The record gives the reactivity of an RNA of 207 nucleotides to 2A3.
The reactions ran in a buffer of 150 mM KOAc, 10 mM MgCl2 and 150 mM bicine (pH 8.5), at 24 C.
2A3 adducts were read by reverse transcription with SuperScript II with manganese.
Source: RMDB library OK3TST, as collected in RNAgym.
RNA sequence: GGGAACGACUCGAGUAGAGUCGAAAACUCAAUCACUACGGUGAUUGAGAAUGCUUACGCCUCAAUUAAGCUUGAAUCGAGUGCCUCUAGCAGAUAUAGACUGAAACAUUUAGUAUGGUCAAGCAGGGAGCAACAGCUCGAGUACGCUCGAGCUGAAGCUCGUCGAUAGUUUCGACUAUCGACGAGCAAAAGAAACAACAACAACAAC
Reactivity to 2A3 in 0.01 (KOAc 150mM, MgCl2 10mM, bicine 150mM(pH8.5), 24C), signal-to-noise 1, nucleotides 027 to 156: c000u010c000a000a000u000c000a000c000u020a030c270g120g010u000g000a000u000u000g000a000g020a010a030u090g000c010u090u150a040c140g020c030c020u060c020a070a190u090u150a210a060g010c010u030u090g080a120a040u150c140g000a020g070u070g050c000c010u060c010u030a010g030c000a020g110a100u110a000u020a110g100a060c010u070g040a050a050a050c010a060u120u110u020a020g070u020a130u110g060g030u030c010a000a000g000c020a040g110g000g000a090g000c000a040a070c010a000g000c000u000c000g050a000g020u050a010c220g070c070u000c000g000a000g060c040u020g000a010a020